This 207-nucleotide RNA was probed chemically with 2A3. The data come from the RNA Mapping Database (RMDB), library OK3TST. Values are in units of 0.01, from 0 to 300, in steps of 10. The RNA was probed in 150 mM KOAc, 10 mM MgCl2 and 150 mM bicine (pH 8.5) at 24 C.

RNA sequence: GGGAACGACUCGAGUAGAGUCGAAAAGGCUUGCAAAUCGCUUUACAACCAUACCUAUGGGCACAUACCAGUAUAUGGUGUCUGUAGAACAACUUAAGUACAUGAUGGCAGUUAAAAUGUCUCCUCCACGCAAUGCGUUCGAGGUGCUAAUUGCCAACCGAAUGGUGAACUUCGGUUCACCAUUCGGAAAAGAAACAACAACAACAAC
Reactivity to 2A3 in 0.01 (KOAc 150mM, MgCl2 10mM, bicine 150mM(pH8.5), 24C), signal-to-noise 1, nucleotides 027 to 156: g000g070c080u090u110g120c220a110a110a030u100c090g050c000u120u060u100a130c120a070a110c000c000a030u050a160c030c000u080a000u020g000g000g000c000a040c000a030u030a060c070c070a020g110u040a130u020a050u300g140g000u010g000u020c000u000g030u010a030g040a050a010c070a070a000c050u240u300a120a020g080u120a140c150a200u160g040a150u000g140g010c000a000g000u000u000a000a090a060a300u070g100u090c020u030c010c000u010c000c040a010c000g000c030a090a160u300g000c010g020u000u090c020g000a000g000g000u000g000c000u000a000a000u040u000g000c000c000a030a020